[RMDB]
RNA sequence: GGGAACGACUCGAGUAGAGUCGAAAAGUCAGUCGCCCUGGAGACGCCUGACGUCGGCGAGGUGGGCAUCGUCGUCAACCCCGCGGCGCAGCAGGCCAUCGUGCUGCGCGUGAAAGGCCCAGUGGCGCACAUCGUCUUCCUUCGGGAAGACGAUGUGAAAAGAAACAACAACAACAAC
Reactivity to 2A3 in 0.01 (KOAc 150mM, MgCl2 10mM, bicine 150mM(pH8.5), 24C), signal-to-noise 1, nucleotides 027 to 126: g080u030c020a020g070u060c000g000c000c000c000u030g090g040a210g030a060c100g020c010c010u050g040a040c100g010u080c040g050g000c030g030a030g030g030u120g000g030g040c030a040u090c020g080u040c040g020u020c000a030a150c000c000c020c020g000c010g010g080c000g000c000a000g040c000a010g080g050c110c020a180u160c050g130u000g000c020u000g000c000g000c020g020u060g020a150a160a020g040g000c000c000c000a040g060u160g000g000c050g000
Reactivity to DMS in 0.01 (KOAc 150mM, MgCl2 10mM, bicine 150mM(pH8.5), 24C), signal-to-noise 2, nucleotides 027 to 126: g000u000c080a050g020u000c010g030c010c000c020u020g000g020a220g000a100c200g000c050c000u000g010a220c020g020u010c060g020g010c010g010a010g000g010u010g000g010g010c030a070u010c170g020u000c100g040u010c030a060a170c000c000c010c030g020c040g000g010c000g000c020a030g010c020a070g010g020c070c060a040u000c060g030u000g000c020u000g000c020g010c020g020u020g010a070a130a110g010g000c000c000c010a040g010u000g010g020c030g010